[RMDB]
An RNA of 177 nucleotides, treated with 2A3 and DMS and read out base by base. It was measured as part of the RMDB library OK2TST. For DMS, 1,054 sequencing reads were counted. Reactivities are given for positions 27 through 126. The reactions ran in a buffer of 150 mM KOAc, 10 mM MgCl2 and 150 mM bicine (pH 8.5), at 24 C.
RNA sequence: GGGAACGACUCGAGUAGAGUCGAAAAUACGGUGUCCUCUGGGGCGUCUGGCUGGUGAUCGUCGGUUGGCUCACGUUGUGGCCGUUCCUUAAUUGGCUCACCACACAUUUCGUCGUAACUAACCGGACCUACCGAGGUGAUUCGUCACCUCGGUAGGAAAAGAAACAACAACAACAAC
Reactivity to 2A3 in 0.01 (KOAc 150mM, MgCl2 10mM, bicine 150mM(pH8.5), 24C), signal-to-noise 1, nucleotides 027 to 126: u130a050c020g010g010u030g040u070c000c000u090c060u090g020g010g000g000c050g010u050c020u030g040g010c000u020g000g060u060g020a080u120c040g020u020c040g060g030u000u070g020g060c060u050c120a050c120g170u180u270g030u020g030g000c040c050g040u050u030c020c020u020u080a070a080u200u120g000g000c020u000c020a010c020c000a010c020a000c010a040u100u240u140c020g000u000c000g050u050a040a040c020u020a000a090c030c000g100g000a060
Reactivity to DMS in 0.01 (KOAc 150mM, MgCl2 10mM, bicine 150mM(pH8.5), 24C), signal-to-noise 1, nucleotides 027 to 126: u000a070c140g020g000u000g010u000c010c060u020c200u000g020g020g000g010c100g000u000c030u000g030g000c140u020g010g030u000g000a050u010c100g010u000c050g010g020u000u010g020g030c030u000c080a000c050g000u000u000g000u010g000g000c060c020g000u000u000c030c020u010u020a050a140u010u000g000g020c070u020c070a120c030c030a010c040a080c170a080u010u000u020c050g010u000c040g010u000a040a080c130u010a120a100c020c010g000g010a230